Structure probing data (DMS and 2A3) for a 207-nucleotide construct. The data come from the RNA Mapping Database (RMDB), library M2RFPK.

RNA sequence: GGGAACGACUCGAGUAGAGUCGAAAAGCUUAAUAACCUGCGCUGAGCCCUUCUCCCUCAGCUUGCCUGUGUCCUAGGGAAUUGGAAGGUCAUCCUUCACAGGAUCGUGUGGAAGUCCUGCUCGGGGUCCAAACAUGGUAAUUCGUUACCAUGUUAAUAUCUAAAAGAAAUUCGUUUCUUUUAGAUAAAAAGAAACAACAACAACAAC
Reactivity to DMS in 0.01 (KOAc 150mM, MgCl2 10mM, bicine 150mM(pH8.5), 24C), signal-to-noise 2, nucleotides 027 to 156: g010c060u010u000a060a090u000a100a080c010c020u000g020c070g010c050u000g010a080g000c050c020c050u000u000c050u000c000c010c020u000c050a050g010c030u000u010g010c020c030u020g020u010g000u010c050c030u000a130g010g020g010a120a120u000u010g020g010a070a070g020g030u010c060a120u000c010c010u010u020c070a080c050a080g010g000a030u010c040g030u000g020u000g030g010a110a090g030u000c020c020u000g020c060u000c060g000g030g030g000u000c030c010a100a020a030c000a010u000g000g010u000a010a070u010u010c260g020u000u000a010c000c000a010u000g000u000u000a040a150
Reactivity to 2A3 in 0.01 (KOAc 150mM, MgCl2 10mM, bicine 150mM(pH8.5), 24C), signal-to-noise 4, nucleotides 027 to 156: g010c030u100u130a080a010u070a160a160c030c030u060g030c050g000c060u030g020a030g010c020c010c030u060u030c050u040c010c020c010u020c030a020g010c030u030u130g040c030c000u050g010u020g020u060c010c060u040a070g000g020g080a090a120u130u120g040g030a030a020g040g030u080c040a090u130c000c020u070u080c030a040c010a060g030g020a040u060c040g030u060g010u050g100g020a040a020g030u020c000c000u010g030c020u010c040g010g000g000g020u010c020c030a040a000a000c000a010u000g000g010u010a020a020u040u070c040g030u030u000a000c000c000a000u000g000u000u010a000a010
For DMS, 7,159 sequencing reads were counted. For 2A3 the reverse transcriptase was SuperScript II with manganese. The RNA was probed in 150 mM KOAc, 10 mM MgCl2 and 150 mM bicine (pH 8.5) at 24 C. DMS adducts were read by reverse transcription with MarathonRT.